The data come from the RNA Mapping Database (RMDB), library OK2TRN.
The record gives the reactivity of an RNA of 177 nucleotides to 2A3 and DMS.
The RNA was probed in 150 mM KOAc, 10 mM MgCl2 and 150 mM bicine (pH 8.5) at 24 C.

RNA sequence: GGGAACGACUCGAGUAGAGUCGAAAAUAAGCAUGUGUCUAAAUAGCAAGUAAUGUUUUAGAGCGGAUUCUCUUAAAUUCAGCUUGGGCAUCUGCACCAUAUACACAGCUUGAGCUGUCACCUGACGUCCAAGUGUAGUGUUCGCACUACACUUGGAAAAAGAAACAACAACAACAAC
Reactivity to 2A3 in 0.01 (KOAc 150mM, MgCl2 10mM, bicine 150mM(pH8.5), 24C), signal-to-noise 2, nucleotides 027 to 126: u140a010a020g010c040a050u050g030u000g010u100c010u050a070a050a210u110a100g000c030a060a020g100u170a070a090u060g040u000u060u040u070a050g000a000g000c090g030g080a110u210u010c060u000c000u010u130a100a120a110u070u040c030a010g000c000u020u010g020g020g000c000a020u000c000u010g000c030a040c030c010a040u040a010u010a110c040a000c030a020g030c040u060u080g000a050g010c030u020g000u010c030a030c140c010u080g100a050c030g030
Reactivity to DMS in 0.01 (KOAc 150mM, MgCl2 10mM, bicine 150mM(pH8.5), 24C), signal-to-noise 2, nucleotides 027 to 126: u010a050a060g040c020a070u020g010u010g000u000c060u000a070a100a060u010a130g000c030a040a080g010u000a110a060u000g000u010u000u000u020a040g020a080g020c090g000g010a090u000u000c040u020c110u000u010a040a050a060u000u010c060a120g020c010u000u000g000g000g020c030a030u000c070u000g010c050a110c150c070a090u010a100u000a060c080a050c050a080g000c020u000u000g010a070g000c040u010g010u000c120a080c100c050u000g010a110c220g000